[RMDB]
RNA sequence: GGGAACGACUCGAGUAGAGUCGAAAAGGAAUCCAGCCUCCAGGUCCGGCUGGUCGCCGCUACUGGGCUCGACGCAUUACCCAUGUCACCGAUGUUGGUUUAGGAGUCGAAUUGCGGCUGUGGCGCAGCUACCCCACCUAUUCGUAGGUGGGGUAGCAAAAGAAACAACAACAACAAC
Reactivity to DMS in 0.01 (KOAc 150mM, MgCl2 10mM, bicine 150mM(pH8.5), 24C), signal-to-noise 3, nucleotides 027 to 126: g000g010a080a060u000c020c010a020g000c010c010u000c030c020a100g020g000u010c120c080g010g000c010u000g000g010u010c070g030c010c010g000c030u000a120c020u000g000g000g000c040u000c020g010a030c050g010c080a130u000u000a050c060c000c030a040u010g010u000c070a120c170c130g020a040u000g000u010u000g010g010u000u010u010a070g020g010a170g020u000c020g010a030a060u000u000g010c010g010g020c040u000g000u000g000g010c030g020c200a040
Reactivity to 2A3 in 0.01 (KOAc 150mM, MgCl2 10mM, bicine 150mM(pH8.5), 24C), signal-to-noise 2, nucleotides 027 to 126: g010g000a020a040u040c020c000a010g030c000c000u020c030c030a090g010g210u130c060c070g020g000c000u000g050g000u010c010g020c010c000g010c030u060a030c030u040g000g000g080c010u040c000g020a040c010g040c050a060u100u000a020c000c050c040a020u060g020u030c050a060c300c140g000a040u020g040u120u080g010g050u060u070u100a110g040g040a030g020u020c000g000a030a010u040u120g180c030g000g000c000u010g020u020g000g050c000g000c020a010